Conditions: 150 mM KOAc, 10 mM MgCl2 and 150 mM bicine (pH 8.5), 24 C.
The record gives the reactivity of an RNA of 207 nucleotides to 2A3.
Reactivities are given for positions 27 through 156.
As a SHAPE reagent, 2A3 marks flexible, mostly unpaired nucleotides at the ribose 2'-OH.
The 2A3 profile rests on 722 reads.

RNA sequence: GGGAACGACUCGAGUAGAGUCGAAAAAGAUCGAUUACGAUCGAUCAAUGAUGCCCCUCACCCACCUCUGAAGAUCCCAGGUGGGCGAGGGAACGGAGCACGGGAUGACGAGCAGUACGCUGCUCGAAAAAGAACUAGACCUUCGGGUCUAGUUCAAGAGGUUUAACUUGUUCGCAAGUUAAACCUCAAAAGAAACAACAACAACAAC
Reactivity to 2A3 in 0.01 (KOAc 150mM, MgCl2 10mM, bicine 150mM(pH8.5), 24C), signal-to-noise 1, nucleotides 027 to 156: a000g010a000u000c010g000a000u030u090a160c140g010a000u010c000g010a000u040c000a000a030u170g140a010u060g050c000c000c000c000u000c010a010c010c000c000a020c000c010u000c020u070g080a110a010g040a190u110c030c010c020a000g000g000u000g000g000g030c000g000a000g020g000g000a000a000c010g050g010a050g100c080a070c090g040g000g020a040u090g090a070c000g010a010g010c000a010g010u080a010c200g000c070u000g000c000u030c010g020a020a000a000a000a000g000a010a000c000u030a000g010a000c000c000u000u160c280g040g000g010u000c000u000a000g000u000u000c000a000a000